[RMDB]
RNA sequence: GGGAACGACUCGAGUAGAGUCGAAAAGUUCAACGACUAGCGAGUGAUGUAAAUCAGUCAAAUAAUCUCGCCACGAGCGCCCGACAUCUUGAUAUUUACUUAGACCCCCGCUUAAGUAAAUAUGGCCCUGUUUUUUAUUGUUCGCAAUAAAAAACAGAAAAGAAACAACAACAACAAC
Reactivity to DMS in 0.01 (KOAc 150mM, MgCl2 10mM, bicine 150mM(pH8.5), 24C), signal-to-noise 1, nucleotides 027 to 126: g030u000u010c060a140a080c140g000a050c120u000a060g020c030g010a070g010u000g000a070u000g010u000a120a090a060u010c120a120g000u040c110a080a090a200u000a190a090u010c010u000c020g020c010c110a150c080g000a030g040c110g010c030c020c050g010a060c190a060u000c080u020u000g010a040u000a000u000u000u000a000c000u000u000a000g000a290c030c030c040c050c050g020c120u000u020a000a000g000u030a020a000a000u000a030u000g040g040c060c110